[RMDB]
RNA sequence: GGGAACGACUCGAGUAGAGUCGAAAAAGAGAGACAGCUUAUGCCAUUAUUUCUGCAUAUCAGAGACUUUUAGUACUUUCACUAAUUUUGCUACUGUUAUCUAAAAGGCAGAGCCAGGUGUACAGGGUGGAACAUGAAAGUGGACUAGGAGCGUGAAGACUAGGUCAUAGUUCGCUAUGACCUAGUCAAAAGAAACAACAACAACAAC
Reactivity to DMS in 0.01 (KOAc 150mM, MgCl2 10mM, bicine 150mM(pH8.5), 24C), signal-to-noise 1, nucleotides 027 to 156: a080g010a110g020a160g010a140c050a060g010c040u000u000a070u010g030c010c050a140u010u000a110u000u010u020c060u010g000c080a030u010a090u000c030a140g000a160g020a080c060u000u000u000u010a030g010u000a080c120u000u000u010c050a080c040u020a060a080u010u010u010u000g020c050u000a090c050u000g020u010u000a050u010c050u000a050a030a090a080g020g020c020a030g000a080g060c030c040a090g030g000u000g000u000a050c040a040g000g020g010u000g020g000a020a020c060a110u000g020a000a050a140g030u000g000g000a060c050u000a070g020g010a070g000c030g050u000g010a070a180
Reactivity to 2A3 in 0.01 (KOAc 150mM, MgCl2 10mM, bicine 150mM(pH8.5), 24C), signal-to-noise 3, nucleotides 027 to 156: a000g060a000g010a010g000a010c020a050g030c020u100u090a060u140g040c020c010a080u100u090a090u080u260u030c080u040g010c030a020u050a050u210c030a010g030a020g050a190c010u030u030u020u020a000g000u060a060c050u090u170u170c090a020c030u040a050a210u060u080u060u130g050c010u050a280c010u030g010u110u040a110u050c100u160a040a040a090a070g050g010c020a010g000a000g040c020c010a010g010g010u040g010u010a050c050a020g000g060g000u040g040g010a030a020c020a030u050g010a010a030a040g030u040g000g010a010c000u000a030g050g000a010g030c040g020u070g050a100a030
Chemical mapping of a 207-nucleotide RNA with DMS and 2A3.
The reactions ran in a buffer of 150 mM KOAc, 10 mM MgCl2 and 150 mM bicine (pH 8.5), at 24 C.
For DMS the reverse transcriptase was MarathonRT.
For 2A3 the reverse transcriptase was SuperScript II with manganese.
For DMS, 2,411 sequencing reads were counted.